[RMDB]
RNA sequence: GGGAACGACUCGAGUAGAGUCGAAAAGAUAUGGAUGUAGUGUUACAGCAUAGGGAGCUCUGAUCUAUCAUCGGAAACGAUGAUAGAUCUGAGCGAAGAACUAUGAAGGUGGCUACAUCCUAAGUCAGAUCAGUGUAUUGUUCGCAAUACACUGAUCAAAAGAAACAACAACAACAAC
Reactivity to 2A3 in 0.01 (KOAc 150mM, MgCl2 10mM, bicine 150mM(pH8.5), 24C), signal-to-noise 2, nucleotides 027 to 126: g060a040u130a040u200g000g000a000u010g000u010a000g020u030g210u300u210a050c030a040g070c000a040u010a010g010g020g010a030g020c010u000c030u050g000a000u000c000u010a000u020c000a010u010c010g010g040a070a100a070c000g000a000u000g000a000u000a000g010a010u030c000u000g000a000g000c000g000a020a010g000a000a000c010u000a000u030g060a070a120g130g070u080g020g000c010u020a010c010a000u010c000c000u000a040a000g070u040c090a020
Reactivity to DMS in 0.01 (KOAc 150mM, MgCl2 10mM, bicine 150mM(pH8.5), 24C), signal-to-noise 2, nucleotides 027 to 126: g000a050u010a300u000g010g000a010u010g010u000a010g020u000g000u020u010a020c030a180g000c000a010u000a010g010g020g020a120g020c010u000c000u000g010a010u010c010u000a010u000c010a000u000c000g000g010a110a080a200c020g020a000u010g000a020u000a020g020a010u000c000u000g000a000g020c000g000a060a140g000a120a170c000u010a000u010g020a050a050g000g000u010g020g010c000u000a010c010a010u000c000c000u000a000a080g010u010c040a120
Structure probing data (2A3 and DMS) for a 177-nucleotide construct. High 2A3 reactivity points to a flexible backbone, as in loops and unpaired stretches. For 2A3, 4,706 sequencing reads were counted.